[RMDB]
RNA sequence: GGGAACGACUCGAGUAGAGUCGAAAACUCAGACACAGUGUGUGUGAGUGACUCUCAGUCAGAGACACUGUGAGACUGUGAGUGAGACUCAGUCUGAGACACACUGUCAGUGACAGUCACUGACUCAUAGGAUGCUCUUUUUCGAAAGAGCAUCCUAAAAAGAAACAACAACAACAAC
Reactivity to 2A3 in 0.01 (KOAc 150mM, MgCl2 10mM, bicine 150mM(pH8.5), 24C), signal-to-noise 2, nucleotides 027 to 126: c020u030c020a000g030a040c030a000c020a180g050u010g010u020g010u000g000u030g120a020g000u040g080a010c000u000c010u000c040a000g040u000c000a030g030a010g040a220c020a070c220u180g050u030g140a080g010a030c010u030g010u030g050a010g040u080g040a160g080a040c010u000c020a030g100u040c070u030g040a020g050a040c000a000c000a010c030u030g030u030c020a030g010u030g090a040c060a110g030u110c000a010c030u010g050a030c000u010c040a070
Reactivity to DMS in 0.01 (KOAc 150mM, MgCl2 10mM, bicine 150mM(pH8.5), 24C), signal-to-noise 3, nucleotides 027 to 126: c000u000c010a120g010a200c080a050c050a090g000u010g040u010g020u000g020u000g020a040g010u000g010a030c110u000c040u000c020a030g000u010c030a070g000a210g010a090c080a050c120u000g010u020g000a180g000a050c010u000g000u010g010a040g000u000g020a110g010a140c010u000c020a070g010u020c070u010g020a100g000a080c020a040c010a020c010u000g000u000c000a030g000u000g010a130c150a120g000u000c020a060c000u000g000a130c060u010c170a120
The data come from the RNA Mapping Database (RMDB), library OK2TRN.
Structure probing data (2A3 and DMS) for a 177-nucleotide construct.
Reactivities are given for positions 27 through 126.
Conditions: 150 mM KOAc, 10 mM MgCl2 and 150 mM bicine (pH 8.5), 24 C.
For 2A3, 1,860 sequencing reads were counted.
The DMS profile rests on 2,860 reads.